[RMDB]
RNA sequence: GGGAACGACUCGAGUAGAGUCGAAAACCAACACACUCCUUCCCCCCUGCGGGGCUUCCCCAUAAGAUGGCAGGAACCCACUCAUUGGGGUCCGCUGUUCCAUUCUUUCUUACCUUGUGGCCGGCAUAACGAAACGUGUUCGCACGUUUCAAAAGAAACAACAACAACAAC
Reactivity to DMS in 0.01 (KOAc 150mM, MgCl2 10mM, bicine 150mM(pH8.5), 24C), signal-to-noise 9, nucleotides 027 to 129: c010c000a070a050c180a100c090a090c060u040c030c030u040u020c010c000c010c000c020c030u070g040c010g000g010g010g020c090u030u030c010c010c000c040a060u030a000a090g030a080u030g020g070c010a080g000g040a030a060c050c010c010a070c240u040c010a210u070u060g010g020g030g040u020c000c010g070c060u050g020u050u050c020c010a100u030u020c030u000u000u000c100u020u020a050c070c020u000u000g060u030g030g030c000c000g050g000c060a040u080a090a090c070
Reactivity to 2A3 in 0.01 (KOAc 150mM, MgCl2 10mM, bicine 150mM(pH8.5), 24C), signal-to-noise 9, nucleotides 027 to 129: c010c000a110a010c120a010c010a020c030u080c020c000u050u110c000c010c000c000c000c020u060g020c080g020g010g000g010c000u050u040c000c000c000c000a020u060a110a050g070a060u040g040g000c040a040g050g020a030a030c010c010c000a080c020u160c030a160u100u230g000g000g000g000u010c000c010g040c030u020g040u060u030c030c010a080u070u050c000u040u050u010c010u050u080a130c030c000u050u070g030u090g040g010c010c010g000g010c020a050u060a090a040c060
The record gives the reactivity of an RNA of 170 nucleotides to DMS and 2A3. For 2A3, 33,759 sequencing reads were counted. The RNA was probed in 150 mM KOAc, 10 mM MgCl2 and 150 mM bicine (pH 8.5) at 24 C. The DMS profile rests on 44,139 reads. As a SHAPE reagent, 2A3 marks flexible, mostly unpaired nucleotides at the ribose 2'-OH.